[RMDB]
RNA sequence: GGGAACGACUCGAGUAGAGUCGAAAAGAUAUGGACGGGGGUAUGAGAGAAUGAUACAGCAAGGCUCCAGUCGGAAACGACUGAGCUGAUGACCUGUAUCAUUCUCUCAUACCCACCGUCCUAAGUCCUACACCUAUUAGUUCGCUAAUAGGUGUAGAAAAGAAACAACAACAACAAC
Reactivity to DMS in 0.01 (KOAc 150mM, MgCl2 10mM, bicine 150mM(pH8.5), 24C), signal-to-noise 4, nucleotides 027 to 126: g010a110u010a280u010g000g000a000c000g030g000g000g020g050u000a000u010g010a010g000a030g010a020a000u000g010a000u000a010c000a000g000c040a090a160g010g020c000u010c170c170a010g010u010c010g010g000a100a130a190c000g010a020c000u000g010a030g000c010u010g010a060u010g010a060c300c010u000g000u000a020u000c000a000u000u000c000u000c000u000c010a000u000a000c000c000c000a000c010c000g020u000c000c000u010a000a090g000u010c060

The data come from the RNA Mapping Database (RMDB), library TTRINS.
An RNA of 177 nucleotides, treated with DMS and read out base by base.
For DMS the reverse transcriptase was MarathonRT.
The RNA was probed in 150 mM KOAc, 10 mM MgCl2 and 150 mM bicine (pH 8.5) at 24 C.